Source information
The record gives the reactivity of an RNA of 177 nucleotides to 2A3 and DMS. Values are in units of 0.01, from 0 to 300, in steps of 10.
[RMDB]
RNA sequence: GGGAACGACUCGAGUAGAGUCGAAAAAAAUCUCACUCAAUACAGCGGAUGGUUGAAAUGCCAUAUACGCCAAUGAAUACCGCAACAAUGGUGAUGGGGCAAAGUGUCCCCAUUCGUUGAGUGCGGACAAUGUCUAGAGCUUCGGCUCUAGACAUUGAAAAGAAACAACAACAACAAC
Reactivity to 2A3 in 0.01 (KOAc 150mM, MgCl2 10mM, bicine 150mM(pH8.5), 24C), signal-to-noise 1, nucleotides 027 to 126: a000a010a040u000c000u000c000a040c020u190c010a040a100u090a200c040a060g000c000g040g000a000u000g020g000u110u060g100a080a080a050u230g000c020c000a000u030a050u040a090c020g000c010c040a030a060u070g090a030a070u090a180c010c020g030c000a000a000c000a010a000u020g220g020u140g050a010u010g000g010g000g020c040a000a300a290g150u070g060u150c000c000c000c000a000u010u010c000g000u010u010g050a090g060u020g000c010g000g010a010
Reactivity to DMS in 0.01 (KOAc 150mM, MgCl2 10mM, bicine 150mM(pH8.5), 24C), signal-to-noise 1, nucleotides 027 to 126: a070a070a070u010c000u000c020a260c260u020c080a170a060u000a070c260a130g000c000g000g000a050u000g000g000u000u000g000a100a180a110u010g000c000c000a010u020a050u000a230c000g000c000c100a140a180u050g000a010a050u000a160c010c020g000c040a010a010c020a020a020u000g000g060u040g020a000u000g050g000g000g000c000a050a120a190g000u020g020u000c000c000c000c000a000u000u000c050g000u020u000g000a170g000u020g000c050g020g050a250
The reactions ran in a buffer of 150 mM KOAc, 10 mM MgCl2 and 150 mM bicine (pH 8.5), at 24 C. High DMS reactivity at an A or C suggests that its Watson-Crick edge is free. The DMS profile rests on 587 reads.